Chemical mapping of a 177-nucleotide RNA with DMS and 2A3.
The DMS profile rests on 1,238 reads.
[RMDB]
RNA sequence: GGGAACGACUCGAGUAGAGUCGAAAACGCAGCCGCUGCCUCUUCCACUAAUGCGGCGUUUUGCUGAGUAACCUGGUCCAUCUGUGUUACCGCGAGUGAAACCUGCUCAAUACCCCGGCUUUGCUCAGGAUGACAGUAUCUUCGGAUACUGUCAUCCAAAAGAAACAACAACAACAAC
Reactivity to DMS in 0.01 (KOAc 150mM, MgCl2 10mM, bicine 150mM(pH8.5), 24C), signal-to-noise 2, nucleotides 027 to 126: c140g020c060a100g000c030c010g010c020u010g050c040c040u000c090u000u000c040c050a080c130u000a120a100u000g010c010g030g020c050g010u000u000u020u000g010c050u000g020a160g000u010a090a040c050c040u020g000g030u010c120c110a130u000c050u000g000u030g000u010u000a050c040c050g020c110g000a070g010u000g000a050a070a060c020c020u010g020c020u000c110a070a070u020a190c060c020c010c060g040g010c070u000u000u010g010c050u010c030a220
Reactivity to 2A3 in 0.01 (KOAc 150mM, MgCl2 10mM, bicine 150mM(pH8.5), 24C), signal-to-noise 1, nucleotides 027 to 126: c050g020c000a010g030c000c020g000c000u030g050c030c030u040c070u090u080c040c000a060c060u150a070a070u110g010c010g010g030c000g030u010u010u060u020g020c000u090g030a020g060u010a010a000c010c020u050g030g050u070c150c040a150u080c030u040g140u000g000u110u020a020c010c060g040c070g070a010g000u020g030a040a020a030c000c000u010g020c020u020c000a030a180u170a190c020c000c020c040g020g000c010u020u080u030g050c020u000c040a020